Source information:
Chemical mapping of a 177-nucleotide RNA with DMS and 2A3. Conditions: 150 mM KOAc, 10 mM MgCl2 and 150 mM bicine (pH 8.5), 24 C. Values cover nucleotides 27 to 126. For DMS the reverse transcriptase was MarathonRT. The 2A3 profile rests on 17,286 reads. 2A3 adducts were read by reverse transcription with SuperScript II with manganese. The DMS profile rests on 19,023 reads.
[RMDB]
RNA sequence: GGGAACGACUCGAGUAGAGUCGAAAAUACAUACUAUCAGCGCUCAAAGAAGUUAAACAUUUUGAUUAGCGCUGUAGGCAAAUGCUCGACAGCCCCUAAUCUGAGUUCUAGUACGUUUAUAUACCACGAGUGUAACUCCUUUCGAGGAGUUAUAUUCAAAAGAAACAACAACAACAAC
Reactivity to DMS in 0.01 (KOAc 150mM, MgCl2 10mM, bicine 150mM(pH8.5), 24C), signal-to-noise 9, nucleotides 027 to 126: u010a090c070a090u000a100c020u000a060u010c040a030g020c050g030c010u000c070a050a090a150g000a050a050g010u000u010a090a120a160c240a070u000u000u000u000g000a250u010u000a030g010c300g020c000u000g010u000a050g000g010c080a080a050a080u010g010c100u000c020g000a040c060a080g000c050c050c070c040u010a050a080u000c050u000g010a060g010u000u000c040u000a040g010u000a040c050g000u010u000u010a050u000a100u000a150c070c060a080c210
Reactivity to 2A3 in 0.01 (KOAc 150mM, MgCl2 10mM, bicine 150mM(pH8.5), 24C), signal-to-noise 8, nucleotides 027 to 126: u080a010c020a020u130a040c000u030a020u230c020a010g010c010g010c030u010c020a050a050a050g080a080a020g070u140u220a140a180a050c060a110u030u040u030u070g030a040u030u060a010g000c000g000c000u000g000u000a000g000g000c030a160a220a110u180g000c030u040c040g040a040c020a030g070c010c020c010c000u020a040a020u040c040u070g040a020g040u050u020c010u020a010g020u020a010c020g000u000u070u070a160u020a020u040a050c010c050a030c120